Source information: The record gives the reactivity of an RNA of 207 nucleotides to DMS and 2A3. The RNA was probed in 150 mM KOAc, 10 mM MgCl2 and 150 mM bicine (pH 8.5) at 24 C. For 2A3, 1,368 sequencing reads were counted. The data come from the RNA Mapping Database (RMDB), library OK3TST.
RNA sequence: GGGAACGACUCGAGUAGAGUCGAAAAAUAACCAUGGCAAAGUUUUUUUGAAAAGCCUUGAUGUUAGAUUUAAUGGUCAAUGGAGUACCAAAAACCACAUGAUGCCGUGUGCUUUUCUUACCAGCGCUUGCACUAUACAUGCUGGCAGGAUAGCCAGCGAAUCUUCACAGUUCGCUGUGAAGAUUCGAAAAGAAACAACAACAACAAC
Reactivity to DMS in 0.01 (KOAc 150mM, MgCl2 10mM, bicine 150mM(pH8.5), 24C), signal-to-noise 2, nucleotides 027 to 156: a120u010a060a060c000c020a080u000g000g010c010a150a110a120g000u000u000u000u010u000u000u010g010a110a050a060a250g000c010c010u010u000g020a100u000g010u000u000a040g000a190u010u000u000a060a080u000g020g020u000c010a020a150u000g040g010a200g030u010a300c080c050a010a080a060a040a110c020c010a040c050a090u010g000a140u000g050c030c030g040u000g000u010g000c030u000u000u010u000c010u000u000a030c030c010a050g020c010g030c100u000u000g000c030a090c120u000a130u000a050c010a050u020g030c010u000g010g000c000a100g000g000a070u000a100g010c000c030a080g020
Reactivity to 2A3 in 0.01 (KOAc 150mM, MgCl2 10mM, bicine 150mM(pH8.5), 24C), signal-to-noise 2, nucleotides 027 to 156: a000u100a020a000c020c000a020u070g010g000c020a010a070a140g020u060u070u050u050u050u120u280g060a130a070a010a010g020c020c000u010u050g050a050u070g020u030u050a040g030a120u060u120u260a190a080u110g080g020u010c040a060a030u170g070g010a080g070u090a080c000c000a000a000a000a170a000c080c040a060c020a050u090g020a100u040g060c030c000g050u060g040u060g060c000u080u050u050u040c000u040u030a090c040c020a020g030c040g050c080u050u100g070c110a040c130u120a090u120a230c060a040u120g000c000u000g010g000c010a010g030g080a060u040a050g030c000c000a000g000